[RMDB]
RNA sequence: GGGAACGACUCGAGUAGAGUCGAAAAACUGCAGGGCCGCCCCCGCGGUCCCGCUCUCGUUCAGUGGGUGGCAUUAGCCUGCCCCAGGUUCCUCAGCUUCGGAGAGGACAAGCAGCCGGGACCUGAGAGCUUUCUGUGUUGCAGUGACCAAGCAGAACCAUUACCAGUGAUUCGUCACUGGUAAUGGAAAAGAAACAACAACAACAAC
Reactivity to 2A3 in 0.01 (KOAc 150mM, MgCl2 10mM, bicine 150mM(pH8.5), 24C), signal-to-noise 1, nucleotides 027 to 156: a000c020u010g000c010a010g020g000g000c000c000g020c000c080c020c020c040g000c000g010g010u000c000c000c010g000c000u000c010u020c000g150u300u130c120a070g050u200g060g000g000u020g020g000c050a090u090u250a060g000c000c010u050g000c030c000c000c000a010g000g020u030u000c020c020u040c070a070g000c020u110u130c130g140g040a220g040a090g140g060a100c050a060a000g050c040a010g090c120c010g000g000g040a000c000c000u000g010a010g000a010g010c000u030u100u010c060u050g050u010g090u100u020g000c000a010g000u010g050a030c020c020a030a020g050c010a000g020a060a050

Conditions: 150 mM KOAc, 10 mM MgCl2 and 150 mM bicine (pH 8.5), 24 C. Structure probing data (2A3) for a 207-nucleotide construct. 2A3 is a SHAPE reagent: it acylates the 2'-hydroxyl of flexible nucleotides of all four kinds. 2A3 adducts were read by reverse transcription with SuperScript II with manganese.